Notes
An RNA of 177 nucleotides, treated with DMS and read out base by base.

RNA sequence: GGGAACGACUCGAGUAGAGUCGAAAAGUGAAUGGUUUGUAAAGGAAGUUGAGCUAUCACAAGUUUUCUUUCCUCUCCUGUUAGGGAACAUAAUUCAACUGUUGUCGAUAAUCCUUCACAAGAAUGACCCAGGCAAUAGUUUCGACUAUUGCCUGGGAAAAGAAACAACAACAACAAC
Reactivity to DMS in 0.01 (KOAc 150mM, MgCl2 10mM, bicine 150mM(pH8.5), 24C), signal-to-noise 1, nucleotides 027 to 126: g010u000g050a030a010u010g030g010u000u000u010g000u000a040a140a190g010g000a090a030g030u000u000g010a030g010c070u000a020u000c260a140c160a170a080g010u000u000u000u000c030u000u000u000c030c200u000c090u010c090c060u000g000u000u010a070g010g000g010a010a110c070a050u010a010a090u000u000c000a010a010c050u000g050u010u030g040u000c060g000a100u000a060a010u000c000c010u000u000c010a030c090a050a090g000a090a100u000g000a230
The RNA was probed in 150 mM KOAc, 10 mM MgCl2 and 150 mM bicine (pH 8.5) at 24 C.